RNA sequence: GGGAACGACUCGAGUAGAGUCGAAAAUCCUAUCAGUGUGUGCUAUGGGAGAUUUCUUGUGGUGGAGUACAGGAAGAGGGUGAGACAUCUAAGAAUGUCACCCCAACAUUUUUAUCACAGUCAAUAAGCACGUGUUCAGCUUCGGUUGAGCACGUGCAAAAGAAACAACAACAACAAC
Reactivity to 2A3 in 0.01 (KOAc 150mM, MgCl2 10mM, bicine 150mM(pH8.5), 24C), signal-to-noise 6, nucleotides 027 to 126: u030c010c000u030a080u070c070a070g050u040g040u030g050u070g130c010u050a080u070g010g070g010a100g020a130u080u090u030c030u050u060g020u060g050g020u010g020g020a030g000u040a050c050a020g040g050a030a040g070a100g050g000g010u060g030a060g000a010c000a000u020c030u080a070a100g050a140a040u020g010u020c010a120c020c000c020c010a000a050c020a030u090u080u020u030u070a100u150c020a010c010a050g100u080c040a100a140u130a250a020
Reactivity to DMS in 0.01 (KOAc 150mM, MgCl2 10mM, bicine 150mM(pH8.5), 24C), signal-to-noise 6, nucleotides 027 to 126: u020c000c000u000a050u030c100a090g020u010g010u000g020u010g010c050u030a040u000g010g010g000a080g000a100u030u000u010c040u020u030g010u010g000g020u010g000g000a050g020u020a080c120a050g010g010a050a070g000a150g000g000g020u000g000a110g000a030c040a010u010c090u000a090a100g020a060a010u000g000u000c040a100c020c000c000c040a120a040c060a020u010u000u010u010u020a040u020c080a060c070a110g000u010c090a070a080u040a060a170
Chemical mapping of a 177-nucleotide RNA with 2A3 and DMS. The DMS profile rests on 16,317 reads. For DMS the reverse transcriptase was MarathonRT. 2A3 adducts were read by reverse transcription with SuperScript II with manganese. High 2A3 reactivity points to a flexible backbone, as in loops and unpaired stretches. Values are in units of 0.01, from 0 to 300, in steps of 10.